[RMDB]
RNA sequence: GGGAACGACUCGAGUAGAGUCGAAAACUGUUUCGGAUCGCGCUCGCGCAGCUGGGGCUCGAUGACCGUGCGGAUGUCAGCUGGGAGCAGCGCCGAGUCGAAGUGAUCGUGCGCCGAACCGAGGCAAGUAUAGCCCUCGUUUCGACGAGGGCUAUACAAAAGAAACAACAACAACAAC
Reactivity to DMS in 0.01 (KOAc 150mM, MgCl2 10mM, bicine 150mM(pH8.5), 24C), signal-to-noise 1, nucleotides 027 to 126: c040u000g030u000u010u000c000g010g010a070u000c030g000c260g010c000u010c000g000c060g020c090a170g010c000u000g020g010g000g000c000u010c020g000a210u000g000a120c140c100g020u000g010c000g000g020a070u020g010u000c090a090g000c000u000g030g000g030a130g010c030a210g000c000g010c060c000g020a030g030u000c010g040a150a090g020u000g000a150u000c010g000u000g010c070g040c030c040g020a050a080c000c010g010a020g000g030c030a020a120
Reactivity to 2A3 in 0.01 (KOAc 150mM, MgCl2 10mM, bicine 150mM(pH8.5), 24C), signal-to-noise 2, nucleotides 027 to 126: c010u020g000u020u010u020c020g000g010a040u070c010g020c000g040c060u040c000g090c000g040c070a010g000c010u030g020g000g090g070c010u000c080g040a080u100g110a100c020c070g110u160g000c040g100g080a130u140g120u180c020a000g030c000u060g010g000g080a050g080c030a010g030c000g020c010c020g000a020g060u020c020g070a180a010g060u100g100a200u070c000g020u090g040c020g000c020c040g010a000a000c000c010g000a030g020g020c030a060a030

This 177-nucleotide RNA was probed chemically with DMS and 2A3. 2A3 adducts were read by reverse transcription with SuperScript II with manganese.